[RMDB]
RNA sequence: GGGAACGACUCGAGUAGAGUCGAAAAGAUAUGGAGACCUGGAGGCGAGCCACCCGUUUGACGGUAGAGGCUCGGAAACGAGCCUCUACCCGAGGGUGGAACUACUCGUGAAGGGUCUCCUAAGUCACCUUAUACGGUAGUUCGCUACCGUAUAAGGAAAAGAAACAACAACAACAAC
Reactivity to DMS in 0.01 (KOAc 150mM, MgCl2 10mM, bicine 150mM(pH8.5), 24C), signal-to-noise 1, nucleotides 027 to 126: g040a060u000a060u020g000g000a020g000a020c010c000u000g010g020a300g000g010c030g000a020g020c000c000a000c000c010c000g000u000u020u020g010a300c300g020g000u000a020g000a020g000g030c020u000c000g030g000a000a030a040c000g010a000g000c020c000u000c000u000a000c030c010c000g000a010g040g010g000u020g000g000a000a000c020u000a300c000u000c010g000u010g020a300a200g000g000g010u000c000u000c010c000u000a000a050g000u000c000a190